This 177-nucleotide RNA was probed chemically with 2A3 and DMS. For 2A3, 1,878 sequencing reads were counted. Source: RMDB library OK2TRN, as collected in RNAgym. DMS adducts were read by reverse transcription with MarathonRT. The RNA was probed in 150 mM KOAc, 10 mM MgCl2 and 150 mM bicine (pH 8.5) at 24 C.
RNA sequence: GGGAACGACUCGAGUAGAGUCGAAAACGGUCCGCGCUGCCGCCCAUGCCGCUCGACGGCGGACGGACCUGUGGCGAUAGACGUCACGACCGAUCGCCGCGUUCCGGGCGAGACGGCCGCCGACGUAAUAAAAUUUACUCUUCGGAGUAAAUUUUAUAAAAGAAACAACAACAACAAC
Reactivity to 2A3 in 0.01 (KOAc 150mM, MgCl2 10mM, bicine 150mM(pH8.5), 24C), signal-to-noise 2, nucleotides 027 to 126: c010g040g040u010c020c020g000c080g000c010u040g010c000c020g030c010c050c010a050u160g010c010c030g010c020u020c040g260a260c020g040g020c000g000g010a010c000g030g040a300c010c010u050g040u030g010g010c020g030a080u070a270g180a150c020g010u010c000a000c000g020a020c000c000g020a080u000c000g000c000c000g040c030g050u080u060c030c030g010g030g000c010g010a060g020a080c000g010g010c040c020g010c020c060g020a010c010g010u030a040
Reactivity to DMS in 0.01 (KOAc 150mM, MgCl2 10mM, bicine 150mM(pH8.5), 24C), signal-to-noise 4, nucleotides 027 to 126: c050g010g010u000c030c100g010c110g020c070u010g010c000c000g030c000c010c060a170u010g020c070c020g000c040u000c040g010a100c000g000g000c000g010g010a050c010g000g010a080c100c020u010g020u000g010g010c020g010a300u010a140g000a120c000g010u000c000a060c020g010a050c010c000g000a180u000c010g000c000c000g030c060g010u010u000c050c030g010g010g000c010g000a140g000a080c010g010g020c010c070g020c020c060g000a020c010g010u010a110